RNA sequence: GGGAACGACUCGAGUAGAGUCGAAAAAAGAUUACUACUAUGUUCGCGAUAGUCGCUUUUAUGGCACCGAAUUUAUUAGAUCGUUUUAUUACAAUCAACAAGGUAUAGUGGUUGAAAAUAUACGUGUAGGCGUAUUGUUGCUUACUAAACAAGGCAACGUUAGCUAUACCUUCGGGUAUAGCUAACGAAAAGAAACAACAACAACAAC
Reactivity to DMS in 0.01 (KOAc 150mM, MgCl2 10mM, bicine 150mM(pH8.5), 24C), signal-to-noise 2, nucleotides 027 to 156: a070a050g000a170u020u000a080c020u010a030c020u000a030u020g000u000u000c070g010c090g000a090u010a050g010u010c060g030c100u010u010u000u000a100u030g060g030c010a230c070c010g010a040a060u000u000u000a080u020u000a150g020a070u010c030g020u000u000u000u000a100u040u000a120c110a040a070u010c020a010a070c050a040a080g050g020u010a040u000a080g030u010g030g000u000u000g000a060a040a100a080u010a070u000a020c050g040u010g010u010a100g010g050c030g020u010a050u000u000g000u000u000g000c010u010u000a150c100u020a110a050a110c070a010a110g000g000c030a070a120
Reactivity to 2A3 in 0.01 (KOAc 150mM, MgCl2 10mM, bicine 150mM(pH8.5), 24C), signal-to-noise 3, nucleotides 027 to 156: a000a000g090a030u140u070a070c010u000a000c020u020a010u110g020u020u040c050g020c070g130a130u080a170g070u070c030g010c100u090u110u110u150a130u220g010g000c000a010c010c010g020a030a020u070u080u050a080u060u140a040g040a070u030c000g010u020u050u020u080a170u100u120a070c060a030a070u050c010a020a070c020a150a040g090g010u100a030u040a140g060u040g030g000u030u050g040a010a020a040a000u180a000u010a030c030g000u040g100u150a030g070g090c020g010u030a020u030u100g030u030u040g000c010u010u030a020c030u070a040a090a040c070a050a020g090g020c040a010a000
Description:
Structure probing data (DMS and 2A3) for a 207-nucleotide construct. For 2A3 the reverse transcriptase was SuperScript II with manganese. Reactivities are given for positions 27 through 156. The reactions ran in a buffer of 150 mM KOAc, 10 mM MgCl2 and 150 mM bicine (pH 8.5), at 24 C. The DMS profile rests on 2,869 reads.